[RMDB]
RNA sequence: GGGAACGACUCGAGUAGAGUCGAAAAACACCACGACUUCGGUCGUGGUGUAAAAAGAUAUGGACUGUUUAGGCUAGUUCCUGAUCGGAAACGAUCAGAAGAACUUGGACCCUAACAGUCCUAAGUCAAAAAACACGAUUCUUUCGAGAAUCGUGAAUAGUCUUCAUCUAUUCGUAGAUGAAGACUAAAAAGAAACAACAACAACAAC
Reactivity to DMS in 0.01 (KOAc 150mM, MgCl2 10mM, bicine 150mM(pH8.5), 24C), signal-to-noise 1, nucleotides 027 to 156: a080c010a040c000c000a000c000g000a020c000u000u000c300g100g000u000c000g080u000g000g000u000g000u000a000a020a060a120a040g000a070u010a030u000g000g000a040c000u000g010u010u000u010a020g010g030c020u000a010g030u000u000c030c010u000g000a010u000c000g020g010a050a030a080c000g030a020u010c000a010g020a100a130g010a050a010c020u010u000g080g010a060c210c000c000u000a020a010c010a020g050u000c000c000u020a000a060g000u040c010a010a050a040a100a100a220c020a030c000g000a040u000u000c000u010u000u010c230g020a060g000a010a020u020c010g010u010g010a020a090
Reactivity to 2A3 in 0.01 (KOAc 150mM, MgCl2 10mM, bicine 150mM(pH8.5), 24C), signal-to-noise 3, nucleotides 027 to 156: a000c010a010c000c000a000c000g000a000c050u050u120c300g090g000u000c010g020u000g000g000u000g000u000a000a000a000a000a000g000a000u000a000u030g000g000a000c000u000g030u090u080u140a020g000g030c080u050a030g010u000u000c000c000u010g000a000u000c000g000g010a000a030a010c010g000a000u010c000a010g030a130a040g000a000a000c010u080u270g110g040a040c000c000c000u000a010a000c000a000g000u000c000c000u000a010a000g000u010c000a000a000a020a060a020a090c010a000c000g000a000u000u000c010u030u120u180c300g040a020g000a030a010u000c000g000u000g000a000a030